[RMDB]
RNA sequence: GGGAACGACUCGAGUAGAGUCGAAAAUGAAGUCAGACACUCCUUGGUAAGUGUGGUCAGGGAGGGCCUCCCCGAGGAGGUGGCAUGCAAGCUGAGGCCCGAUGGCAUGAAGGCAGUAUUGUGUGGAAGAGAGCCGUGAGUGCAAAGGCCCUGUGGCGUUACCGGCUAGAUUCGUCUAGCCGGUAACAAAAGAAACAACAACAACAAC
Reactivity to 2A3 in 0.01 (KOAc 150mM, MgCl2 10mM, bicine 150mM(pH8.5), 24C), signal-to-noise 1, nucleotides 027 to 156: u140g050a040a080g040u130c070a010g010a090c000a000c020u000c000c000u020u000g040g000u080a130a120g060u100g090u110g110g010u020c030a050g030g100g100a080g020g000g000c000c000u070c100c090c020c000g000a030g010g000a030g000g170u030g030g000c000a000u090g040c030a010a080g060c030u030g000a040g040g000c070c000c010g050a100u060g060g000c030a010u080g020a030a080g020g020c040a030g030u040a170u210u230g070u050g000u030g080g000a070a010g090a020g000a000g010c010c030g190u070g000a010g010u030g000c000a050a000a040g020g020c030c010c010u100g010u080g010g000c080

Background: The record gives the reactivity of an RNA of 207 nucleotides to 2A3.